Structure probing data (2A3) for a 177-nucleotide construct. The reactions ran in a buffer of 150 mM KOAc, 10 mM MgCl2 and 150 mM bicine (pH 8.5), at 24 C. Reactivities are rounded to 0.1 and cut off at 0 and 3. It was measured as part of the RMDB library OK1LIB. 2A3 adducts were read by reverse transcription with SuperScript II with manganese.

[RMDB]
RNA sequence: GGGAACGACUCGAGUAGAGUCGAAAAGCAAGGUCGGCUUUAAGCUGUUUUUUUAUGUCAGUGGUAUUUAUGUUUGGGGUGAGGAUAAGUGGCAUAUUGCUUGCUGAUUUUGCAGCUUGGUCAGCUACCUCGCAUAUCGGUUCGCCGAUAUGCGAGGAAAAGAAACAACAACAACAAC
Reactivity to 2A3 in 0.01 (KOAc 150mM, MgCl2 10mM, bicine 150mM(pH8.5), 24C), signal-to-noise 4, nucleotides 027 to 126: g030c050a020a010g060g030u070c010g020g040c000u190u230u230a020a000g040c020u000g080u010u000u000u010u100u080u160a100u150g060u030c010a010g010u020g060g010u040a150u090u150u030a060u100g180u010u070u160g020g000g020g020u100g080a110g080g010a030u060a150a050g070u080g070g000c010a030u010a030u060u110g050c040u060u070g010c000u010g010a060u070u050u070u110g000c000a000g010c000u040u050g000g010u010c010a040g000c000u020a030